[RMDB]
RNA sequence: GGGAACGACUCGAGUAGAGUCGAAAAAACUCUGUCAACUCAGUACUGCCGGUUCGGUAGUUGUGAGUAUGCACAAGAGGGUGUUUGUAUUACCACAAAUGGCUCGUGGGCCAUUUUUAAUGACCACAUACGGGCGACUUCGGUCGCCCGAAAAGAAACAACAACAACAAC
Reactivity to 2A3 in 0.01 (KOAc 150mM, MgCl2 10mM, bicine 150mM(pH8.5), 24C), signal-to-noise 1, nucleotides 027 to 129: a000a020c000u000c000u000g090u000c050a000a000c000u000c000a000g070u010a000c000u000g000c020c000g300g000u130u180c010g010g010u020a000g000u000u000g090u000g130a000g010u060a110u020g000c070a140c000a060a010g000a000g000g000g020u020g010u000u040u180g140u020a050u010u220a020c060c070a030c020a010a010a010u030g000g000c000u040c150g000u060g000g000g010c000c000a000u020u010u000u000u010a010a160u140g040a000c000c000a030c070a070u050a000

An RNA of 170 nucleotides, treated with 2A3 and read out base by base. The 2A3 profile rests on 1,510 reads. Conditions: 150 mM KOAc, 10 mM MgCl2 and 150 mM bicine (pH 8.5), 24 C.